[RMDB]
RNA sequence: GGGAACGACUCGAGUAGAGUCGAAAAACAAAGAGCGUACAUCUCUCUCAGACUGUACGACAGUCUGACUCUCUCGUACAACUCGCUGACGAGAGAGAGAGAGCGUUCAAAGCAGCGAGAAAAAAAAACUUAAGGAUGUGUUCGCACAUCCUUAAGUAAAAGAAACAACAACAACAAC
Reactivity to 2A3 in 0.01 (KOAc 150mM, MgCl2 10mM, bicine 150mM(pH8.5), 24C), signal-to-noise 1, nucleotides 027 to 126: a000c080a010a110a000g030a000g010c020g030u050a050c110a300u000c020u000c000u000c010u000c020a000g000a000c000u040g010u190a180c060g150a040c130a010g000u000c020u000g010a020c010u000c000u010c010u000c010g020u040a080c040a080a210c070u040c000g000c050u010g000a010c000g010a000g000a000g010a000g010a000g000a010g010a000g000c020g000u010u000c020a080a030a020g120c050a040g010c020g000a010g050a070a000a000a020a000a000a020a010
Reactivity to DMS in 0.01 (KOAc 150mM, MgCl2 10mM, bicine 150mM(pH8.5), 24C), signal-to-noise 2, nucleotides 027 to 126: a120c060a060a080a150g000a020g000c000g000u000a110c160a240u000c010u000c050u000c220u000c010a000g010a010c000u000g010u000a100c210g030a140c000a000g000u000c020u020g000a300c050u010c000u000c000u000c000g010u000a060c110a050a100c020u000c030g020c010u000g000a060c010g000a030g020a030g000a020g010a060g010a040g010a070g000c020g000u000u000c000a120a060a130g000c110a030g020c040g000a000g030a040a000a000a000a040a100a030a150

Overview:
The data come from the RNA Mapping Database (RMDB), library M2PK90. The record gives the reactivity of an RNA of 177 nucleotides to 2A3 and DMS. 2A3 adducts were read by reverse transcription with SuperScript II with manganese. The DMS profile rests on 1,084 reads. The reactions ran in a buffer of 150 mM KOAc, 10 mM MgCl2 and 150 mM bicine (pH 8.5), at 24 C. The 2A3 profile rests on 1,800 reads. For DMS the reverse transcriptase was MarathonRT.